[RMDB]
RNA sequence: GGGAACGACUCGAGUAGAGUCGAAAAGUAGAAUCUGUCAAGCAAAACCCCAAAACCUUACACUGAGAGCAUUUAGCCUGAUUACUCUUUAAAUCAAAUCAGGCAAUAGAUAGAAACUCGAGAGGUGAAACGGGAGUAAUGUUCGCAUUACUCCCAAGUACAUCUUACGGUUCGCCGUAAGAUGUACAAAAGAAACAACAACAACAAC
Reactivity to DMS in 0.01 (KOAc 150mM, MgCl2 10mM, bicine 150mM(pH8.5), 24C), signal-to-noise 1, nucleotides 027 to 156: g010u010a100g020a130a060u000c050u000g030u000c030a060a120g000c080a040a040a170a080c010c000c010c030a040a060a130a060c000c050u020u000a170c080a170c070u000g010a070g000a070g030c010a300u000u000u000a130g000c010c000u020g020a020u000u000a040c040u000c050u000u000u000a040a100a080u000c000a020a070a000u000c000a020g010g020c010a000a010u010a030g000a120u000a160g030a030a080a070c010u000c030g000a150g010a110g000g020u000g000a010a150a070c110g000g010g030a050g000u000a020a000u000g000u000u000c290g040c000a060u000u000a010c000u000c000c020c000a010a020
Reactivity to 2A3 in 0.01 (KOAc 150mM, MgCl2 10mM, bicine 150mM(pH8.5), 24C), signal-to-noise 4, nucleotides 027 to 156: g090u090a040g050a130a100u070c050u100g160u110c090a060a030g030c040a020a060a090a180c010c020c010c020a040a080a030a060c010c040u070u100a040c080a040c110u130g030a010g000a010g070c040a030u040u070u040a090g100c000c000u000g010a010u020u110a110c030u040c080u170u280u230a100a140a070u200c070a050a020a010u000c000a000g000g010c000a000a000u010a000g000a000u030a000g120a080a060a020c020u000c020g060a070g010a010g110g040u040g050a080a070a070c080g000g000g000a000g000u000a000a000u010g020u030u050c150g010c100a000u000u000a000c010u010c000c000c000a000a000
An RNA of 207 nucleotides, treated with DMS and 2A3 and read out base by base. For 2A3 the reverse transcriptase was SuperScript II with manganese. The data come from the RNA Mapping Database (RMDB), library M2RFPK. DMS (dimethyl sulfate) methylates the pairing face of unpaired adenines and cytosines. DMS adducts were read by reverse transcription with MarathonRT.